[RMDB]
An RNA of 207 nucleotides, treated with 2A3 and DMS and read out base by base.
The DMS profile rests on 6,651 reads.

RNA sequence: GGGAACGACUCGAGUAGAGUCGAAAAGGGUGGAAUUUGAAAAGCCCGGCCUGUAUGUCGCAGAGAUCAUCUUGAACAACCACUCGACAGUGUGGAAAUUCUAUGUCGGUGAUGCGCCUGCACGAUUAGACUAUGCGGGAAUCAAACGCGGGCUUGAGUAAUGCUAGUCAUUCGUGACUAGCAUUACAAAAGAAACAACAACAACAAC
Reactivity to 2A3 in 0.01 (KOAc 150mM, MgCl2 10mM, bicine 150mM(pH8.5), 24C), signal-to-noise 3, nucleotides 027 to 156: g070g040g010u110g000g070a160a200u180u150u180g100a170a150a020a000g000c020c000c000g000g040c000c000u020g010u030a040u050g010u010c070g000c030a000g010a010g010a090u030c010a020u000c070u100u180g030a040a000c010a010a050c010c000a010c010u060c030g130a110c110a220g030u030g000u010g120g060a090a100a020u120u050c080u140a100u220g100u070c020g010g030u030g000a020u040g080c070g070c070c010u010g010c020a020c090g070a080u100u190a030g020a020c040u030a020u090g020c030g040g000g050a040a090u160c110a090a080a030c070g000c000g050g000g000c000u010u020g000a000
Reactivity to DMS in 0.01 (KOAc 150mM, MgCl2 10mM, bicine 150mM(pH8.5), 24C), signal-to-noise 3, nucleotides 027 to 156: g010g010g040u000g010g020a090a090u010u000u010g000a070a160a090a090g010c010c000c020g030g010c060c020u000g010u000a050u010g020u000c040g030c020a050g020a140g010a040u000c010a040u000c020u000u000g000a020a040c020a080a300c010c010a020c000u000c070g010a180c200a110g000u000g030u000g000g000a040a090a090u000u000c020u000a130u000g000u000c080g010g030u040g000a030u000g010c050g020c040c000u000g040c020a050c060g000a150u000u000a090g010a070c060u010a050u000g030c020g060g020g010a100a120u020c040a040a070a110c070g020c010g000g010g010c000u000u000g010a280
Record summary
It was measured as part of the RMDB library OK3TST. 2A3 is a SHAPE reagent: it acylates the 2'-hydroxyl of flexible nucleotides of all four kinds. DMS adducts were read by reverse transcription with MarathonRT.